[RMDB]
RNA sequence: GGGAACGACUCGAGUAGAGUCGAAAAAUCUACAGCAACGACCAGGACACUCUCUGCCUAUCAUGCGUGGACACUGCACCAAAGGUCAUCUGCGAUGCUGUUUCCAGCUACCUGCUAGUACCGGAUCUAGGCUGCCAUUACCUCGUAAGGCUGACCAUCGUCAAACGAAAUUCGUUUCGUUUGACGAAAAAGAAACAACAACAACAAC
Reactivity to DMS in 0.01 (KOAc 150mM, MgCl2 10mM, bicine 150mM(pH8.5), 24C), signal-to-noise 2, nucleotides 027 to 156: a100u010c030u000a060c030a140g000c040a070a110c040g010a120c010c050a140g000g000a040c040a040c060u000c050u000c030u000g000c020c030u000a070u000c080a060u020g010c070g030u000g040g010a090c050a040c050u030g040c030a090c030c030a090a170a100g000g000u000c050a110u000c010u000g040c050g000a100u000g000c020u020g000u010u000u010c040c030a120g020c030u000a040c060c010u000g040c070u010a140g000u000a120c030c010g000g020a130u000c030u000a090g020g040c020u010g000c010c040a090u010u000a060c020c030u000c060g030u010a110a120g010g010c010u020g010a090c040c040a180
Reactivity to 2A3 in 0.01 (KOAc 150mM, MgCl2 10mM, bicine 150mM(pH8.5), 24C), signal-to-noise 4, nucleotides 027 to 156: a000u040c030u070a060c010a010g030c030a070a050c050g030a040c030c030a030g000g020a020c000a020c070u040c010u020c030u060g000c000c010u100a090u150c060a060u160g020c060g050u060g000g000a020c020a010c070u040g000c010a010c030c000a080a090a060g060g030u100c050a090u050c040u090g040c020g040a070u060g030c010u000g000u060u050u010c020c020a020g010c020u040a080c020c020u050g050c030u040a030g030u050a110c020c050g020g020a030u030c030u050a060g050g000c000u010g030c020c000a060u030u080a050c000c030u050c020g010u030a040a030g000g020c040u020g050a160c010c010a070